[RMDB]
This 177-nucleotide RNA was probed chemically with DMS and 2A3.
Reactivities are rounded to 0.1 and cut off at 0 and 3.
It was measured as part of the RMDB library M2PK50.
The RNA was probed in 150 mM KOAc, 10 mM MgCl2 and 150 mM bicine (pH 8.5) at 24 C.
RNA sequence: GGGAACGACUCGAGUAGAGUCGAAAAGACCUUCAGUUCGCUGAAGGUCGAUGAUGGUAAGAGAGAUUACGAUCUGUUAAGUGAUAUGGAUAAGAUCUCUCAGUGAACGUGCUUUCGAGCACGUUAAUUGCUUUACAUAAUUCGUUAUGUAAAGCAAAAAAGAAACAACAACAACAAC
Reactivity to DMS in 0.01 (KOAc 150mM, MgCl2 10mM, bicine 150mM(pH8.5), 24C), signal-to-noise 9, nucleotides 027 to 126: g000a010c000c000u000u000c000a010g010u000u010c230g030c010u000g010a020a010g010g010u000c000g000a030u010g010a130u010g010g010u010a100a130g000a010g010a020g000a020u000u000a120c290g000a020u000c000u000g010u000u000a080a150g020u010g010a100u000a020u000g000g000a030u000a080a120g000a020u000c000u000c000u000c000a120g010u010g010a030a010c000g010u000g000c000u000u000u010c190g010a020g010c000a010c000g000u000u000a020a100
Reactivity to 2A3 in 0.01 (KOAc 150mM, MgCl2 10mM, bicine 150mM(pH8.5), 24C), signal-to-noise 7, nucleotides 027 to 126: g000a000c000c000u010u010c010a020g010u010u100c160g020c090u000g000a000a000g010g000u000c000g000a000u020g010a010u030g030g250u230a280a030g000a000g010a000g000a010u020u050a060c140g030a020u000c010u020g050u070u070a170a150g180u100g240a090u070a030u170g020g010a030u020a050a070g000a030u000c000u000c000u000c020a010g040u060g100a010a000c000g000u010g000c000u070u090u080c200g040a010g000c000a000c000g000u000u000a000a010